[RMDB]
RNA sequence: GGGAACGACUCGAGUAGAGUCGAAAAAUGUAGAUAAGGGAAGUCGGCAAAAUAGAUCCGUAACUUCGGGAAAAGGAUUGGCUCUAAGGGUCGGGCGCGUUGGGCCUUGGGGGAAAGCCUCCGGAGCACACCAAGGCCAAUUCGUUGGCCUUGGUGUAAAAGAAACAACAACAACAAC
Reactivity to 2A3 in 0.01 (KOAc 150mM, MgCl2 10mM, bicine 150mM(pH8.5), 24C), signal-to-noise 2, nucleotides 027 to 126: a000u090g010u040a020g020a130u130a120a100g040g020g000a000a090g060u100c020g000g030c020a000a000a000a170u110a040g100a050u030c010c000g020u040a040a040c010u020u030c030g030g010g000a000a130a020a070g080g000a020u070u120g000g000c020u000c000u090a060a090g080g000g020u060c020g000g000g000c110g010c030g030u050u030g010g010g000c000c030u040u050g000g010g000g030g000a040a030a060g030c010c010u000c020c000g050g010a030g010c020
Reactivity to DMS in 0.01 (KOAc 150mM, MgCl2 10mM, bicine 150mM(pH8.5), 24C), signal-to-noise 3, nucleotides 027 to 126: a100u030g000u020a060g030a090u020a110a120g000g010g000a120a100g000u020c040g040g000c100a050a070a110a120u020a080g010a040u010c000c010g020u050a060a110c040u000u010c070g010g010g000a060a030a130a050g000g010a060u020u000g000g000c060u010c000u010a070a120g000g000g000u010c070g000g000g000c040g010c080g020u000u000g000g030g000c040c050u010u000g010g020g000g000g010a080a050a120g030c040c020u000c020c010g000g010a080g020c170